[RMDB]
Structure probing data (2A3) for a 207-nucleotide construct. It was measured as part of the RMDB library M2RFPK. Conditions: 150 mM KOAc, 10 mM MgCl2 and 150 mM bicine (pH 8.5), 24 C. Values cover nucleotides 27 to 156.
RNA sequence: GGGAACGACUCGAGUAGAGUCGAAAAUUACCGCCCAGGAUGGGGUGCAGCGUUCCUGCAAUGUCCAGGGCACCUAGGUGCAGCCUUGUAGUUUUAGUGGACUUUAGGCUAAAGAAUUUCACUAGCAAAAAUCUUUAAGGGUUCGCCCUUAAAGAAACUGUCAAUUAUCGUUCGCGAUAAUUGACAGAAAAGAAACAACAACAACAAC
Reactivity to 2A3 in 0.01 (KOAc 150mM, MgCl2 10mM, bicine 150mM(pH8.5), 24C), signal-to-noise 2, nucleotides 027 to 156: u080u030a020c000c000g050c000c000c000a010g000g010a000u030g010g040g090g140u030g020c000a000g020c020g150u140u170c000c000u010g010c030a040a040u070g010u000c010c010a010g000g000g000c000a030c000c070u070a060g010g110u080g080c010a010g030c000c000u060u050g080u130a000g010u000u020u050u030a010g000u030g010g040a010c000u060u080u030a020g000g070c020u120a120a130a060g050a040a070u080u200u190c020a000c020u030a030g030c060a010a080a050a140a250u020c010u000u000u000a000a010g020g000g000u040u060c110g050c010c000c000u000u000a000a000a000g010a000a010a010